[RMDB]
RNA sequence: GGGAACGACUCGAGUAGAGUCGAAAAUGAAAUAACUAGCAUGCAUAAGACGAGGUAGAGCGCGCGCUCUACCAAAAGAUGUGUGUAAAAACGCACGUGUAGGCGCCGCUACACAAAUAAACAAAAAACUACAGCUAAAGUUCGCUUUAGCUGUAGUAAAAGAAACAACAACAACAAC
Reactivity to 2A3 in 0.01 (KOAc 150mM, MgCl2 10mM, bicine 150mM(pH8.5), 24C), signal-to-noise 1, nucleotides 027 to 126: u070g070a000a050a060u150a070a080c110u060a030g000c010a000u000g000c000a010u020a050a130g070a110c100g050a040g000g020u000a010g000a010g010c060g010c050g040c110g000c140u000c010u040a000c000c010a020a000a000a000g030a020u030g000u000g040u000g020u090a090a090a040a020a000c030g000c010a020c070g000u050g000u010a010g050g010c070g110c260c070g090c040u010a000c000a010c000a000a100a030u100a000a030a000c030a000a140a000a010a000
Reactivity to DMS in 0.01 (KOAc 150mM, MgCl2 10mM, bicine 150mM(pH8.5), 24C), signal-to-noise 1, nucleotides 027 to 126: u030g000a120a090a110u000a090a100c110u000a130g000c010a020u020g020c020a050u000a070a050g000a140c120g000a300g030g000u000a000g010a010g010c000g070c300g040c230g000c000u000c000u000a020c010c010a000a020a040a130g010a000u000g010u000g020u000g000u000a020a000a060a040a130c050g000c080a010c100g010u010g020u000a020g000g010c000g000c140c120g000c020u000a000c020a020c010a070a030a050u000a050a020a020c030a030a070a030a020a050
The record gives the reactivity of an RNA of 177 nucleotides to 2A3 and DMS. Values cover nucleotides 27 to 126. The data come from the RNA Mapping Database (RMDB), library M2PK90. The 2A3 profile rests on 1,221 reads.